RNA sequence: GGGAACGACUCGAGUAGAGUCGAAAAGAUAUGGAUGGACACGGAGCUUGGAUUUAUCGGAAACGAUUGUCAGCUCAGUGUUCCAUCCUAAGUCAAAGCGCUCAAAAGGUUCGCCUUUUGAGCGCAACUAAUACCCAGGGUUCGCCCUGGGUAUUAGAAAAGAAACAACAACAACAAC
Reactivity to DMS in 0.01 (KOAc 150mM, MgCl2 10mM, bicine 150mM(pH8.5), 24C), signal-to-noise 4, nucleotides 027 to 126: g000a030u000a300u000g000g000a000u000g000g000a030c000a010c010g000g020a010g000c000u000u020g010g010a010u000u010u000a000u000c000g010g000a110a100a200c000g000a010u000u000g000u000c000a050g000c010u010c000a020g000u000g000u010u010c010c000a000u000c000c000u000a010a070g010u000c040a080a110a140g020c010g030c000u000c010a010a010a020a010g010g020u000u000c260g010c010c000u000u000u000u000g010a000g020c000g010c010a000a030
Reactivity to 2A3 in 0.01 (KOAc 150mM, MgCl2 10mM, bicine 150mM(pH8.5), 24C), signal-to-noise 3, nucleotides 027 to 126: g030a030u070a040u150g000g010a000u000g010g000a000c000a000c020g020g000a010g040c060u180u210g160g000a070u300u300u240a030u060c010g010g040a100a030a010c010g000a010u030u000g010u030c000a000g000c000u000c020a000g000u010g000u020u010c000c000a000u000c000c000u000a020a000g000u020c020a000a180a050g020c000g000c020u000c000a020a020a000a010g050g010u090u130c250g210c030c010u040u020u010u010g000a000g000c020g000c000a000a000
An RNA of 177 nucleotides, treated with DMS and 2A3 and read out base by base.
For 2A3 the reverse transcriptase was SuperScript II with manganese.
For DMS, 6,287 sequencing reads were counted.
In probing experiments dimethyl sulfate is read out at A N1 and C N3, which are open when not base-paired.
Conditions: 150 mM KOAc, 10 mM MgCl2 and 150 mM bicine (pH 8.5), 24 C.